This 177-nucleotide RNA was probed chemically with DMS and 2A3.
RNA sequence: GGGAACGACUCGAGUAGAGUCGAAAAUUUAGAGUUAGCAGAAGCGGCUUGACAGUGUGGUAAACAGGUGACUGUGAUUGACAUGUUGGACAAACCAGCUGGCAAUAACUUUGAUGAAGAGUUUACCAAAUAAGUGUAACUUCGGUUACACUUAUUUAAAAGAAACAACAACAACAAC
Reactivity to DMS in 0.01 (KOAc 150mM, MgCl2 10mM, bicine 150mM(pH8.5), 24C), signal-to-noise 9, nucleotides 027 to 126: u010u000u000a070g010a070g010u000u000a050g010c050a070g010a130a070g020c050g000g000c040u000u000g010a100c070a040g010u000g030u000g000g000u000a060a110a040c020a040g010g010u010g000a130c020u000g010u000g010a090u000u010g000a050c020a020u010g010u000u000g000g000a160c130a050a070a120c020c010a060g030c020u000g000g000c070a070a060u000a020a020c020u000u000u000g000a070u000g000a110a100g000a120g000u000u000u000a110c040c040
Reactivity to 2A3 in 0.01 (KOAc 150mM, MgCl2 10mM, bicine 150mM(pH8.5), 24C), signal-to-noise 4, nucleotides 027 to 126: u060u060u040a050g000a010g030u040u060a030g030c040a030g030a200a010g030c010g050g000c030u030u070g020a020c020a070g020u020g010u020g110g050u020a030a040a020c000a000g010g080u020g070a030c020u030g020u030g060a070u020u040g010a010c010a020u150g030u010u010g030g010a070c030a040a100a050c010c000a010g020c010u020g020g000c020a010a010u040a030a020c020u060u040u130g070a100u100g070a040a050g080a020g100u040u040u030a080c020c010
For DMS the reverse transcriptase was MarathonRT. The data come from the RNA Mapping Database (RMDB), library OK2TST. The reactions ran in a buffer of 150 mM KOAc, 10 mM MgCl2 and 150 mM bicine (pH 8.5), at 24 C.